[RMDB]
This 177-nucleotide RNA was probed chemically with 2A3 and DMS. It was measured as part of the RMDB library OK2TST. The DMS profile rests on 5,217 reads. The reactions ran in a buffer of 150 mM KOAc, 10 mM MgCl2 and 150 mM bicine (pH 8.5), at 24 C.
RNA sequence: GGGAACGACUCGAGUAGAGUCGAAAAUAGUGCUAGAGACAGCGAAUGCCAGUUGGUUGAUGCGCUUACGUUACGAACAACCUGCGUUGCUAUCCGCACUACGAGCGCAAAUUCUACCAUCAUUGUACGAUAGGGUCAUAUUCGUAUGACCCUAUCGAAAAGAAACAACAACAACAAC
Reactivity to 2A3 in 0.01 (KOAc 150mM, MgCl2 10mM, bicine 150mM(pH8.5), 24C), signal-to-noise 4, nucleotides 027 to 126: u080a020g060u030g030c020u030a040g010a030g030a230c050a020g010c030g130a060a020u070g060c060c020a050g040u000u020g060g000u010u030g030a090u080g010c000g000c010u040u060a110c080g060u070u090a050c040g030a090a010c010a020a000c000c020u060g000c070g040u020u020g010c010u030a050u090c030c020g000c010a020c020u040a050c060g020a020g020c020g000c030a020a020a100u090u010c020u050a090c010c010a010u070c040a100u080u170g060u070a020
Reactivity to DMS in 0.01 (KOAc 150mM, MgCl2 10mM, bicine 150mM(pH8.5), 24C), signal-to-noise 5, nucleotides 027 to 126: u010a070g020u010g010c020u000a100g010a160g010a070c080a050g020c020g010a060a060u010g010c060c090a090g010u010u000g010g000u010u000g010a200u000g000c030g010c110u000u010a090c200g000u000u000a140c100g000a040a060c040a020a040c020c090u010g000c100g010u000u000g020c060u000a110u000c050c050g000c090a050c030u000a050c090g000a050g010c050g020c040a040a050a140u010u000c050u000a110c040c050a060u000c110a100u010u000g010u010a140